The data come from the RNA Mapping Database (RMDB), library M2RFPK. Structure probing data (2A3) for a 207-nucleotide construct. For 2A3 the reverse transcriptase was SuperScript II with manganese.
[RMDB]
RNA sequence: GGGAACGACUCGAGUAGAGUCGAAAAAUGUGCGGCAAAGAAACAUUGUUUAUGCAAAGGCACUUCGCAAUGUGUGCUCAAACAUUGCUUAUUCAAACACGCUUCACAAUGUGCGACCAAGAAACAUAAAACGUUUAGUACUUCGGUACUAAACGAAGUGGGACUGUGUGUUCGCACACAGUCCCACAAAAGAAACAACAACAACAAC
Reactivity to 2A3 in 0.01 (KOAc 150mM, MgCl2 10mM, bicine 150mM(pH8.5), 24C), signal-to-noise 1, nucleotides 027 to 156: a000u110g000u090g060c040g050g000c050a110a130a000g070a030a210a050c090a020u030u040g050u060u090u000a080u170g040c070a240a030a000g170g000c010a000c000u080u040c070g000c030a010a080u020g000u000g000u010g000c020u090c080a060a080a010c040a010u020u020g000c000u040u000a080u040u130c090a000a160a050c090a000c090g000c020u030u030c020a000c000a080a000u020g020u120g040c000g020a050c000c000a080a010g090a150a120a000c070a020u170a100a130a040a010c000g000u000u000u000a000g000u000a000c000u010u000c140g060g000u000a000c000u010a000a000a000c000g000a060a000